[RMDB]
RNA sequence: GGGAACGACUCGAGUAGAGUCGAAAAUCGCGUUGGCUGCCUAAUUCAAGGAAUUAGCGUGCCUUCAUGCUAAGGGUUUGAUAUCUGCUAAAACCCGGUGCAUUCAUGAAUGCAGGUUAAGCCAAAGAAACGGCUCACGAAUUCGUUCGUGAGCCAAGUGUAUGACUUGUUUCGACAAGUCAUACACAAAAGAAACAACAACAACAAC
Reactivity to 2A3 in 0.01 (KOAc 150mM, MgCl2 10mM, bicine 150mM(pH8.5), 24C), signal-to-noise 5, nucleotides 027 to 156: u110c040g010c030g070u010u010g010g020c020u060g030c000c010u020a050a040u040u020c130a230a130g160g010a080a050u060u030a050g060c080g070u050g020c020c020u040u060c020a030u030g000c010u020a020a050g000g000g000u000u000u000g070a070u060a090u170c100u100g040c060u100a000a020a000a020c000c000c000g000g010u060g030c020a060u020u140c040a040u100g060a060a020u080g020c050a000g060g000u080u170a090a040g020c030c020a060a080a010g070a020a110a010c080g000g010c010u000c010a000c000g000a020a010u100u090c180g020u070u000c000g000u070g080a000g000c000c000a010a000
Reactivity to DMS in 0.01 (KOAc 150mM, MgCl2 10mM, bicine 150mM(pH8.5), 24C), signal-to-noise 3, nucleotides 027 to 156: u000c070g010c080g020u010u000g010g010c040u000g000c050c030u000a040a130u000u000c040a090a270g000g040a080a090u000u010a060g010c020g010u020g010c010c050u010u010c010a030u000g020c060u000a270a190g000g000g030u000u000u010g010a210u000a030u000c090u000g000c100u000a080a010a030a030c010c000c000g010g030u000g020c110a170u010u020c080a070u010g010a030a020u010g000c020a030g000g010u000u010a040a020g020c000c010a020a110a200g010a040a090a200c100g010g040c000u000c010a030c000g000a040a120u000u010c300g020u000u010c010g020u000g000a010g010c000c010a000a010

About this RNA
Chemical mapping of a 207-nucleotide RNA with 2A3 and DMS. For DMS the reverse transcriptase was MarathonRT. The 2A3 profile rests on 3,720 reads. The DMS profile rests on 6,921 reads. For 2A3 the reverse transcriptase was SuperScript II with manganese.